[RMDB]
RNA sequence: GGGAACGACUCGAGUAGAGUCGAAAAGAGGUAAAGGUCAGCUCACCAGAUUACCUUAACAUGAACACGGAGCUGGUGGUGCGGGACUUCCUGCAGCGCAUCGAGCACUACGAAGAGCGCUACCAGCCGCGUAGUUAACGUUCGCGUUAACUACGCGAAAAGAAACAACAACAACAAC
Reactivity to 2A3 in 0.01 (KOAc 150mM, MgCl2 10mM, bicine 150mM(pH8.5), 24C), signal-to-noise 3, nucleotides 027 to 126: g120a000g000g080u090a090a080a040g060g010u020c040a000g040c050u040c020a010c010c010a020g030a270u040u140a180c000c000u050u040a070a010c050a210u160g110a060a020c040a010c190g090g000a040g020c000u000g010g020u050g000g040u200g010c080g040g070g030a050c020u170u090c030c010u020g020c040a010g000c020g000c030a070u060c060g050a050g090c050a040c150u150a070c090g010a060a000g060a010g050c010g010c000u010a040c020c000a000g000c040
Reactivity to DMS in 0.01 (KOAc 150mM, MgCl2 10mM, bicine 150mM(pH8.5), 24C), signal-to-noise 3, nucleotides 027 to 126: g000a040g030g000u000a040a050a060g000g000u010c030a160g000c070u000c070a060c020c000a070g010a100u010u000a050c000c000u020u000a050a140c140a120u000g000a140a170c200a090c170g000g000a110g000c010u000g000g000u000g000g010u000g020c020g000g030g030a110c080u000u000c010c030u010g020c080a020g020c040g000c040a140u000c060g010a160g030c040a080c150u010a040c080g020a080a070g000a140g020c000g000c010u020a060c030c050a040g060c110

An RNA of 177 nucleotides, treated with 2A3 and DMS and read out base by base. It was measured as part of the RMDB library OK2TRN. For DMS the reverse transcriptase was MarathonRT. The reactions ran in a buffer of 150 mM KOAc, 10 mM MgCl2 and 150 mM bicine (pH 8.5), at 24 C. 2A3 is a SHAPE reagent: it acylates the 2'-hydroxyl of flexible nucleotides of all four kinds.